[RMDB]
RNA sequence: GGGAACGACUCGAGUAGAGUCGAAAAACAGGAUUUCCGGGUACUGGGUGACCCACUGGGACUUCACGUUCAACGAGAGUCCUUCCUCCCGAUUCCUCGAGCGGUUUCUCGCCGAAAGAGGGGAGGAACUCCCUGACCAAUUCGUUGGUCAGGGAGUAAAAGAAACAACAACAACAAC
Reactivity to 2A3 in 0.01 (KOAc 150mM, MgCl2 10mM, bicine 150mM(pH8.5), 24C), signal-to-noise 2, nucleotides 027 to 126: a000c040a040g050g020a130u070u090u160c070c060g030g010g040u070a080c070u230g240g050g170u240g050a040c010c000c050a060c080u110g030g000g000a010c030u100u100c200a050c200g050u160u200c070a140a070c030g040a020g000a010g130u000c000c000u030u020c000c000u020c000c020c000g000a160u090u070c010c000u040c020g070a100g030c030g010g000u020u220u120c160u110c070g000c000c010g030a070a090a000g020a010g010g000g010g000a020g000g010a000
Reactivity to DMS in 0.01 (KOAc 150mM, MgCl2 10mM, bicine 150mM(pH8.5), 24C), signal-to-noise 2, nucleotides 027 to 126: a100c070a090g010g010a120u000u010u000c100c040g000g000g020u000a060c020u020g010g000g090u020g030a130c030c010c050a100c270u010g000g000g000a030c010u030u000c050a100c050g000u020u000c160a050a140c030g010a230g010a030g000u000c000c020u000u000c010c000u000c000c020c010g000a130u010u020c010c070u000c040g040a110g030c040g010g000u010u020u010c110u000c070g020c010c000g000a040a080a100g000a090g000g000g000g000a020g000g000a010